Chemical mapping of a 207-nucleotide RNA with DMS and 2A3. For DMS, 2,550 sequencing reads were counted. The reactions ran in a buffer of 150 mM KOAc, 10 mM MgCl2 and 150 mM bicine (pH 8.5), at 24 C. The data come from the RNA Mapping Database (RMDB), library OK3TST. Reactivities are given for positions 27 through 156.
[RMDB]
RNA sequence: GGGAACGACUCGAGUAGAGUCGAAAAAUAAGAGAUCAGGAGAUGGUGGCUCCCACAAUAAUAUAUUUUACCUUUAAAGUGACCUAUCCUCUCUGAACCUUAGUUUUGCCAUCUGGAACUGGAACUGGGCAAGAUGAUCUCUAAAGUCUGCAAGAUCCGUCUUAAGUGAAUUCGUUCACUUAAGACGAAAAGAAACAACAACAACAAC
Reactivity to DMS in 0.01 (KOAc 150mM, MgCl2 10mM, bicine 150mM(pH8.5), 24C), signal-to-noise 2, nucleotides 027 to 156: a100u010a070a080g050a100g010a080u000c040a110g010g000a050g000a020u010g010g050u010g010g010c010u000c010c030c010a060c100a130a170u010a030a110u000a100u000a110u010u010u010u010a090c080c070u000u010u010a040a050a190g000u000g020a070c100c030u000a100u010c010c020u020c000u020c030u000g000a110a030c070c010u000u000a060g000u000u010u000u000g000c000c010a080u000c090u000g010g000a070a110c070u010g000g020a120a040c050u000g010g020g000c030a030a100g000a130u010g000a030u000c020u010c010u000a080a090a120g020u000c100u000g050c000a090a300g010a060u000c010
Reactivity to 2A3 in 0.01 (KOAc 150mM, MgCl2 10mM, bicine 150mM(pH8.5), 24C), signal-to-noise 3, nucleotides 027 to 156: a000u170a020a030g010a000g000a020u030c030a030g070g000a010g010a020u090g020g000u020g030g010c020u060c000c060c020a050c070a040a080u240a100a050u100a080u070a160u090u220u160u190a160c030c030u110u150u200a100a120a070g020u030g050a030c000c010u050a040u090c000c020u020c020u000c010u020g060a090a100c000c020u040u100a040g030u010u010u040u070g010c000c010a050u090c110u100g030g100a070a130c090u110g020g030a010a030c040u050g040g020g000c030a010a010g050a050u060g010a010u010c010u000c000u040a040a090a010g060u060c080u110g030c080a060a020g100a120u130c070